Structure probing data (DMS and 2A3) for a 177-nucleotide construct. It was measured as part of the RMDB library OK2TST. For DMS, 2,040 sequencing reads were counted. For 2A3 the reverse transcriptase was SuperScript II with manganese.
RNA sequence: GGGAACGACUCGAGUAGAGUCGAAAAGCGACGGAAAUCUAUCUGCCGAAUCCGAAAGCCGAUUAUCACGAGUACACGGACGGCUUCAAGGUGACGAACGAGGAGUUCGACAUCAUCCGCAGUAUGAGGAUAAAUAGCCUUUCGAGGCUAUUUAUCCAAAAGAAACAACAACAACAAC
Reactivity to DMS in 0.01 (KOAc 150mM, MgCl2 10mM, bicine 150mM(pH8.5), 24C), signal-to-noise 3, nucleotides 027 to 126: g000c040g020a030c020g000g010a030a160a100u010c240u000a100u000c010u010g000c030c000g010a060a100u000c020c040g000a100a040a060g000c010c000g010a050u020u020a090u010c120a080c130g010a220g010u000a020c100a140c010g010g000a010c010g000g000c030u000u000c220a050a040g020g010u000g000a100c020g010a020a020c000g000a150g010g000a300g000u000u000c000g030a080c020a010u000c010a070u000c020c000g020c190a120g000u010a030u000g000a170
Reactivity to 2A3 in 0.01 (KOAc 150mM, MgCl2 10mM, bicine 150mM(pH8.5), 24C), signal-to-noise 2, nucleotides 027 to 126: g050c010g020a040c020g000g090a000a080a010u150c080u130a120u020c010u070g030c000c000g050a040a080u040c010c030g060a040a030a000g000c030c000g010a050u040u100a130u270c110a010c150g030a070g090u080a030c050a010c050g010g030a010c010g000g000c000u050u100c090a020a000g020g000u020g010a010c020g000a020a000c010g000a020g270g110a080g000u020u000c000g020a020c000a010u000c010a020u000c030c000g040c040a010g010u090a060u100g060a070